[RMDB]
RNA sequence: GGGAACGACUCGAGUAGAGUCGAAAAAUGCCGCAUUCAGUGACGGUGACUCUAGUGGGCAACUGUCCAUCUAGCGUUGACAUCUACAUACUAUAUAGUAAUACCAAUACUCAAGACUACGAAACGGGGGUGCUGAUUAUUUCGAUAAUCAGCACCCAAAAGAAACAACAACAACAAC
Reactivity to 2A3 in 0.01 (KOAc 150mM, MgCl2 10mM, bicine 150mM(pH8.5), 24C), signal-to-noise 2, nucleotides 027 to 126: a000u010g070c040c000g030c000a070u090u140c080a010g190u000g000a000c040g000g040u040g000a000c000u040c000u000a070g000u000g060g010g000c130a240a290c190u290g000u010c020c000a030u010c010u000a000g000c010g000u040u000g030a020c000a010u000c000u040a040c010a030u150a160c040u050a040u080a030u090a300g040u050a080a080u000a190c000c000a000a070u050a020c000u000c000a000a110g050a060c000u080a120c190g070a190a070a000c000g120g060